[RMDB]
RNA sequence: GGGAACGACUCGAGUAGAGUCGAAAAGAUAUGGAGUGCUCAACAGCAUGCGUUCGGAAACGAACGUCAUGACAUGAGCCUCCUAAGUCAAAACACUCGAGACUAACUUCGGUUAGUCUCGAGUGAAGGUAAGGAGACUGUUCGCAGUCUCCUUACCAAAAGAAACAACAACAACAAC
Reactivity to DMS in 0.01 (KOAc 150mM, MgCl2 10mM, bicine 150mM(pH8.5), 24C), signal-to-noise 1, nucleotides 027 to 126: g010a050u020a300u010g010g010a010g010u020g070c010u000c000a020a100c100a170g000c010a000u000g000c000g010u000u000c020g020g000a130a060a190c030g000a010a000c010g000u000c070a000u000g000a080c060a280u000g000a000g000c040c030u000c000c000u010a020a080g020u020c070a030a120a190a170c010a000c000u000c000g000a030g010a020c000u010a000a010c000u000u050c130g020g000u000u000a000g010u000c000u020c000g010a000g000u000g000a030a010
An RNA of 177 nucleotides, treated with DMS and read out base by base.
For DMS, 1,036 sequencing reads were counted.
For DMS the reverse transcriptase was MarathonRT.
The data come from the RNA Mapping Database (RMDB), library TTRDEL.
Conditions: 150 mM KOAc, 10 mM MgCl2 and 150 mM bicine (pH 8.5), 24 C.